Chemical mapping of a 177-nucleotide RNA with 2A3 and DMS. Values are in units of 0.01, from 0 to 300, in steps of 10. In probing experiments dimethyl sulfate is read out at A N1 and C N3, which are open when not base-paired. 2A3 adducts were read by reverse transcription with SuperScript II with manganese. It was measured as part of the RMDB library OK1LIB. For 2A3, 551 sequencing reads were counted.
RNA sequence: GGGAACGACUCGAGUAGAGUCGAAAAGUCUGGCAGGCGAACAUGCGCGAGAGAUCGGUCUUCUCGCCAAAGACCAGCUUCAGCAUGGCCUUGUUGAAACCUUCAUCGCCUGCCAUGCCGACAUAGGAUGAUCCCACUCCUUCGGGAGUGGGAUCAUAAAAGAAACAACAACAACAAC
Reactivity to 2A3 in 0.01 (KOAc 150mM, MgCl2 10mM, bicine 150mM(pH8.5), 24C), signal-to-noise 1, nucleotides 027 to 126: g000u000c000u000g000g040c000a000g000g030c000g010a000a020c030a030u110g000c000g000c110g000a010g000a000g000a060u190c240g050g000u000c000u000u000c000u060c020g060c010c000a010a010a010g020a000c000c040a000g000c000u070u050c000a000g000c020a080u030g000g040c040c000u130u100g110u040u130g100a170a040a020c030c040u300u140c110a270u050c000g000c000c000u000g000c000c000a000u080g000c030c050g130a060c050a190u130a000g180g050
Reactivity to DMS in 0.01 (KOAc 150mM, MgCl2 10mM, bicine 150mM(pH8.5), 24C), signal-to-noise 1, nucleotides 027 to 126: g000u000c040u040g000g030c000a020g000g000c020g010a010a180c040a000u000g000c050g040c090g010a020g000a010g010a080u040c030g010g000u000c000u000u020c000u020c140g000c080c150a080a000a130g000a040c010c010a110g030c000u010u010c090a300g000c000a010u000g000g010c120c230u080u010g010u030u040g010a070a050a050c180c000u000u120c220a060u000c000g030c040c000u000g000c000c000a000u010g010c000c090g000a160c210a110u040a010g040g000